[RMDB]
RNA sequence: GGGAACGACUCGAGUAGAGUCGAAAAGAUUGUUUUCGAUUUUUUGUUUCAGCGCGGGAUCUUUUACGUCUUUUGUGAAAACGAUUUUAUUAUUAACUACUUUUACUGGAUAACUUUUGUAUGUCGACUCGGUAUGAAGUUUCGACUUCAUACCGAGAAAAGAAACAACAACAACAAC
Reactivity to 2A3 in 0.01 (KOAc 150mM, MgCl2 10mM, bicine 150mM(pH8.5), 24C), signal-to-noise 2, nucleotides 027 to 126: g140a050u030u020g080u030u060u000u050c070g030a080u010u090u080u060u140u210g040u000u110u010c070a010g050c050g000c020g090g000g000a040u020c000u010u150u030u200a040c000g070u030c020u040u100u130u060g160u020g050a000a000a070a000c010g030a020u180u020u000u080a070u100u000a120u060u080a120a060c010u070a010c020u050u020u060u110a060c040u100g100g000a040u040a100a040c000u060u080u060u190g040u000a110u150g130u030c010g020a010
Chemical mapping of a 177-nucleotide RNA with 2A3. For 2A3, 599 sequencing reads were counted.